[RMDB]
RNA sequence: GGGAACGACUCGAGUAGAGUCGAAAAGUAGAGUGUAUCAUGUCAGUAAGCAUGCCGGGGAAUGGUGGUUUACCCCGUUAUCAAAUGAUUACCGACCAAUAAUUGGCGAAAUUCGUUUCGCGUUGGCAAAGUCACGGCGUGUUCGCACGCCGUGAAACUUGAGGAUAUGUUUCGACAUAUCCUCAAGAAAAGAAACAACAACAACAAC
Reactivity to DMS in 0.01 (KOAc 150mM, MgCl2 10mM, bicine 150mM(pH8.5), 24C), signal-to-noise 3, nucleotides 027 to 156: g040u000a050g020a080g040u010g030u010a080u000c040a090u010g010u000c030a080g010u000a040a070g000c030a030u000g010c250c020g000g000g010g030a050a120u010g010g010u000g020g020u000u000u000a250c020c010c010c010g030u000u010a040u010c300a060a070a030u000g000a100u000u000a000c010c010g000a060c030c060a040a100u010a070a160u010u000g020g030c000g010a020a040a100u000u000c200g020u000u000u000c020g020c090g010u010u010g010g000c050a040a090a170g000u000c010a000c000g010g000c000g080u000g000u010u000c300g050c010a020c000g020c020c000g000u000g000a000a010a050
Reactivity to 2A3 in 0.01 (KOAc 150mM, MgCl2 10mM, bicine 150mM(pH8.5), 24C), signal-to-noise 9, nucleotides 027 to 156: g090u110a020g030a030g050u080g010u050a050u140c030a020u040g090u050c050a030g100u120a090a000g010c010a010u040g040c030c010g000g000g000g010a010a020u040g030g000u010g000g030u030u040u090a070c000c000c010c010g040u050u030a020u030c020a020a020a030u060g030a030u070u050a020c010c030g070a110c040c060a030a020u170a140a100u150u140g090g000c000g000a000a010a020u110u090c160g070u020u010u020c010g000c010g000u000u010g030g010c060a140a030a030g050u020c000a000c000g000g000c000g000u000g020u020u040c120g030c060a000c000g000c000c000g000u000g000a000a000a010